Conditions: 150 mM KOAc, 10 mM MgCl2 and 150 mM bicine (pH 8.5), 24 C.
Chemical mapping of a 207-nucleotide RNA with DMS and 2A3.
The DMS profile rests on 11,077 reads.
Reactivities are rounded to 0.1 and cut off at 0 and 3.
Values cover nucleotides 27 to 156.
For DMS the reverse transcriptase was MarathonRT.
[RMDB]
RNA sequence: GGGAACGACUCGAGUAGAGUCGAAAACAAGGAAUGGCUCUGGAUUUUACAGGCUCUUAUGAGAUGCUGAGACCCUGGUGGUACAAGGGAGGUACAGAGGACGGAAUGUGUUGUCAACAUGCCAGGAUUUCAACCCUUAGGGUUUCUCUGAUGCCAAAAAGGAUGAUACUUUCGAGUAUCAUCCUUUAAAAGAAACAACAACAACAAC
Reactivity to DMS in 0.01 (KOAc 150mM, MgCl2 10mM, bicine 150mM(pH8.5), 24C), signal-to-noise 3, nucleotides 027 to 156: c020a040a040g000g000a060a020u010g010g020c010u000c030u000g000g010a120u000u000u000u000a110c080a070g020g010c030u000c040u000u000a090u000g020a110g030a090u010g030c040u000g010a090g010a040c030c010c000u000g040g040u000g000g010u000a030c020a030a030g020g020g010a040g010g020u000a080c060a090g000a070g000g010a130c060g010g010a050a060u000g010u000g010u020u000g010u010c040a060a050c060a030u010g000c010c010a110g020g000a120u000u000u010c060a050a050c010c030c020u000u000a130g030g010g000u000u000u010c020u000c030u010g010a130u010g020c030c040a040a080
Reactivity to 2A3 in 0.01 (KOAc 150mM, MgCl2 10mM, bicine 150mM(pH8.5), 24C), signal-to-noise 2, nucleotides 027 to 156: c000a000a000g000g020a020a020u040g010g000c030u040c070u070g050g000a100u080u050u030u130a070c040a010g010g050c020u010c000u100u230a150u280g080a070g010a070u200g020c040u070g010a010g010a080c020c010c000u040g010g060u020g020g010u010a010c000a000a000g050g020g010a040g000g020u010a010c020a020g030a010g000g020a010c000g010g060a070a070u060g040u000g030u070u110g060u050c030a030a020c010a080u050g040c010c000a020g030g010a070u020u120u060c030a010a040c030c010c000u020u110a060g040g070g000u020u030u000c010u000c000u000g110a070u110g050c080c000a040a040